[RMDB]
RNA sequence: GGGAACGACUCGAGUAGAGUCGAAAAGGGUAGAUCUUCGGAUCUACCCAAAAGGAGCAACCAACGAAGGAAGUGCAAGCAUAAGCGUGCAGGCUAGCACUAAAAGGUUCCGCUUCGGCGGAACCAACCUAAGUCUAGGGUUCGCCCUAGACUUAGGAAAAGAAACAACAACAACAAC
Reactivity to 2A3 in 0.01 (KOAc 150mM, MgCl2 10mM, bicine 150mM(pH8.5), 24C), signal-to-noise 2, nucleotides 027 to 126: g000g000g000u000a010g000a010u030c030u030u070c260g030g000a000u000c010u000a000c010c000c000a000a010a000a000g030g010a060g010c010a010a080c010c030a020a080c050g080a100a040g150g060a090a010g020u010g000c000a010a040g000c010a070u040a200a030g080c070g080u070g030c050a020g050g070c020u060a040g010c010a010c030u070a040a050a080a070g000g000u000u000c000c000g010c010u040u060c220g130g000c000g000g000a000a010c000c000a000a000
Reactivity to DMS in 0.01 (KOAc 150mM, MgCl2 10mM, bicine 150mM(pH8.5), 24C), signal-to-noise 3, nucleotides 027 to 126: g010g010g020u000a020g000a020u000c000u010u030c190g020g000a010u000c000u010a000c000c000c000a000a000a020a030g000g000a080g020c030a080a120c060c030a100a090c110g000a090a040g000g010a100a030g010u000g010c010a100a020g010c040a050u000a090a070g000c060g000u000g030c070a110g000g010c040u010a090g010c010a060c020u010a040a080a070a100g000g010u000u010c000c000g000c000u000u010c140g030g030c000g000g000a000a010c010c020a000a040
Structure probing data (2A3 and DMS) for a 177-nucleotide construct.
For 2A3 the reverse transcriptase was SuperScript II with manganese.
The data come from the RNA Mapping Database (RMDB), library M2PK50.
In probing experiments dimethyl sulfate is read out at A N1 and C N3, which are open when not base-paired.
For DMS the reverse transcriptase was MarathonRT.
The 2A3 profile rests on 3,101 reads.